An RNA of 177 nucleotides, treated with 2A3 and DMS and read out base by base. The 2A3 profile rests on 3,522 reads. The reactions ran in a buffer of 150 mM KOAc, 10 mM MgCl2 and 150 mM bicine (pH 8.5), at 24 C. It was measured as part of the RMDB library OK1LIB.
[RMDB]
RNA sequence: GGGAACGACUCGAGUAGAGUCGAAAAGAAAGAAAGAAGAAGAAGAAAAAGAGGUCAAAUGUCAGAAUAUCGGGCGUAAAUGCGACAUUAUGCAGAAAGCCGACCUCAAUGUCGUAAAGAAAGAAAAAUCCCUCAUACGAUUCGUCGUAUGAGGGAUAAAAGAAACAACAACAACAAC
Reactivity to 2A3 in 0.01 (KOAc 150mM, MgCl2 10mM, bicine 150mM(pH8.5), 24C), signal-to-noise 3, nucleotides 027 to 126: g080a000a070a000g060a020a070a020g050a000a000g020a030a000g020a010a000g050a050a030a040a000a000g010a000g010g000u010c020a010a000a100u160g030u070c020a020g090a170a020u080a050u190c040g010g120g000c020g040u090a080a000a080u090g010c000g000a010c010a020u100u090a040u160g010c040a040g010a100a030a000g110c030c010g000a020c010c000u000c000a000a020u060g000u030c000g020u050a040a000a150g070a050a060a010g100a010a070a040a010
Reactivity to DMS in 0.01 (KOAc 150mM, MgCl2 10mM, bicine 150mM(pH8.5), 24C), signal-to-noise 4, nucleotides 027 to 126: g000a040a070a050g010a070a040a050g010a140a020g020a080a050g010a050a050g000a060a050a010a040a060g020a030g000g000u000c050a060a040a050u020g000u020c050a070g020a110a070u030a090u010c110g000g010g020c050g000u010a020a030a080u010g000c020g000a020c030a050u010u000a060u020g010c050a060g010a060a090a060g010c060c110g000a030c060c020u020c030a040a040u020g010u000c010g030u010a030a070a100g000a070a050a080g010a030a080a050a080